RNA sequence: GGGAACGACUCGAGUAGAGUCGAAAAAUAAUCAUACAGGUUGAAUACCCAUCCAUCACGCAGAUUAAGGAUGCAGUAGUACAGACAUUCAACCUAAUUAGUUUCAGCCAUGAGGGUGUGGAGUGGACCCAAGUAACUAGUUCGCUAGUUACUUGGGAAAAGAAACAACAACAACAAC
Reactivity to 2A3 in 0.01 (KOAc 150mM, MgCl2 10mM, bicine 150mM(pH8.5), 24C), signal-to-noise 4, nucleotides 027 to 126: a000u100a000a040u050c040a020u050a200c070a060g010g000u000u010g010a000a000u020a080c030c020c000a010u000c010c000a050u070c030a030c130g110c120a060g000a100u160u090a190a070g030g010a010u010g010c040a030g060u170a010g050u060a090c060a090g130a060c030a040u010u030c000a010a000c000c010u010a040a050u080u080a010g040u000u030u020c050a040g020c040c020a050u090g060a080g050g080g030u090g060u070g040g070a040g030u070g010g030a030
Reactivity to DMS in 0.01 (KOAc 150mM, MgCl2 10mM, bicine 150mM(pH8.5), 24C), signal-to-noise 4, nucleotides 027 to 126: a060u000a050a080u000c080a100u010a140c180a050g030g000u010u000g000a010a040u000a120c070c130c020a050u000c020c010a080u000c100a120c120g020c140a100g000a100u000u010a080a120g010g000a050u000g030c190a100g000u010a080g010u000a110c240a120g020a100c120a080u000u000c020a010a000c000c000u010a070a100u010u000a070g020u010u010u000c040a090g000c020c020a050u000g010a110g000g000g000u000g020u010g010g000a110g010u010g000g000a220
Notes: Chemical mapping of a 177-nucleotide RNA with 2A3 and DMS. For 2A3 the reverse transcriptase was SuperScript II with manganese. The reactions ran in a buffer of 150 mM KOAc, 10 mM MgCl2 and 150 mM bicine (pH 8.5), at 24 C.